Chemical mapping of a 177-nucleotide RNA with DMS and 2A3. Conditions: 150 mM KOAc, 10 mM MgCl2 and 150 mM bicine (pH 8.5), 24 C. Reactivities are given for positions 27 through 126. It was measured as part of the RMDB libraries RFM100 and RFMREP.
RNA sequence: GGGAACGACUCGAGUAGAGUCGAAAAGGCGGCCGUUGCGGGGCUUGAAACGCGGGUAGCGCGCACGCCCGGCGAAGAAGUUCGCAUACGCGGUGUGCUGGUGCCGAAGUGUCUGCUGCAACGGCACCUUUACUGGGAUAUUCGUAUCCCAGUAAAGAAAAGAAACAACAACAACAAC
Reactivity to DMS in 0.01 (KOAc 150mM, MgCl2 10mM, bicine 150mM(pH8.5), 24C), signal-to-noise 9, nucleotides 027 to 126: g000g020c150g010g000c010c000g010u010u010g020c010g010g010g010g020c130u030u020g010a070a100a060c040g000c070g000g010g020u030a060g020c010g010c110g000c000a020c030g010c010c020c030g010g010c010g010a020a020g010a170a090g010u000u000c010g010c010a100u010a300c060g010c080g010g020u010g000u000g000c010u010g000g020u010g010c000c000g000a090a260g000u000g010u010c040u020g000c020u010g000c010a020a040c000g000g010c000a010c010
Reactivity to 2A3 in 0.01 (KOAc 150mM, MgCl2 10mM, bicine 150mM(pH8.5), 24C), signal-to-noise 9, nucleotides 027 to 126: g110g040c120g070g000c000c000g000u000u000g000c020g020g080g040g040c050u080u090g070a130a110a010c040g000c030g030g010g050u130a040g050c020g000c010g000c030a000c000g000c000c010c000g010g000c010g000a010a020g060a090a040g220u030u010c000g000c010a040u080a250c050g030c150g010g000u010g000u010g000c040u100g080g060u030g000c010c000g020a070a030g010u020g020u030c030u080g080c010u040g000c000a000a000c000g000g000c000a010c000